[RMDB]
RNA sequence: GGGAACGACUCGAGUAGAGUCGAAAACACCUUGCGCCACGUUCCUUCCGGGGCGCCGAGGUGCGCGAGCAGUUGGGCGCCCUGCCGCUUGGUCAGGCCGGAGAGCGGGGUGAGGUCCACGCCGCCGUGUACCGACGUAGUUCGCUACGUCGGUACAAAAAGAAACAACAACAACAAC
Reactivity to DMS in 0.01 (KOAc 150mM, MgCl2 10mM, bicine 150mM(pH8.5), 24C), signal-to-noise 3, nucleotides 027 to 126: c070a040c000c010u000u000g010c020g010c030c010a120c050g000u010u010c080c090u010u000c230c030g000g000g020g010c010g010c040c030g030a020g010g020u000g010c070g010c130g000a190g030c000a030g030u010u000g030g010g030c000g000c030c010c010u000g030c020c030g000c060u000u010g020g010u000c170a130g020g000c050c030g000g010a050g010a290g020c010g000g010g010g010u000g020a080g010g000u020c020c010a040c070g010c020c010g010c030c070g000
Reactivity to 2A3 in 0.01 (KOAc 150mM, MgCl2 10mM, bicine 150mM(pH8.5), 24C), signal-to-noise 1, nucleotides 027 to 126: c020a010c000c000u030u030g000c020g030c000c010a060c020g040u130u140c030c020u130u090c080c020g010g000g000g000c020g000c010c040g070a010g010g050u020g010c020g000c000g020a130g000c030a150g130u080u080g030g010g010c010g000c000c020c000u000g000c000c020g070c020u060u120g000g030u070c090a100g070g170c020c000g040g010a070g000a000g010c040g000g000g000g000u060g100a100g020g110u000c010c000a020c030g030c000c010g020c000c020g100
Chemical mapping of a 177-nucleotide RNA with DMS and 2A3.
For 2A3 the reverse transcriptase was SuperScript II with manganese.
The DMS profile rests on 3,499 reads.
It was measured as part of the RMDB library OK2TST.